Conditions: 150 mM KOAc, 10 mM MgCl2 and 150 mM bicine (pH 8.5), 24 C. Chemical mapping of a 177-nucleotide RNA with DMS. DMS adducts were read by reverse transcription with MarathonRT. Reactivities are given for positions 27 through 126. It was measured as part of the RMDB library TTRINS. For DMS, 1,464 sequencing reads were counted.
RNA sequence: GGGAACGACUCGAGUAGAGUCGAAAAGAUAUGGACUAUAAGCUUGGGCUGAGAACUGCGAUAAGAUCAGUAUCGGAAACGAUAUAGAUCUUUUGACGCAGACAGCCCAAGCUUAUAGUCCUAAGUCCAAUCCAAAAGACUUCGGUCUUUUGGAUUGAAAAGAAACAACAACAACAAC
Reactivity to DMS in 0.01 (KOAc 150mM, MgCl2 10mM, bicine 150mM(pH8.5), 24C), signal-to-noise 2, nucleotides 027 to 126: g000a090u010a300u020g000g010a020c000u000a000u000a000a010g010c000u000u010g000g000g000c000u000g000a190g040a130a100c010u010g010c000g030a170u000a020a010g000a010u000c000a300g040u000a000u010c010g000g000a140a080a290c010g000a000u000a020u000a120g000a010u000c000u000u000u000u000g020a270c090g020c000a020g040a120c010a040g010c000c000c000a010a010g000c010u000u000a000u000a000g000u000c010c000u000a000a080g010u010c100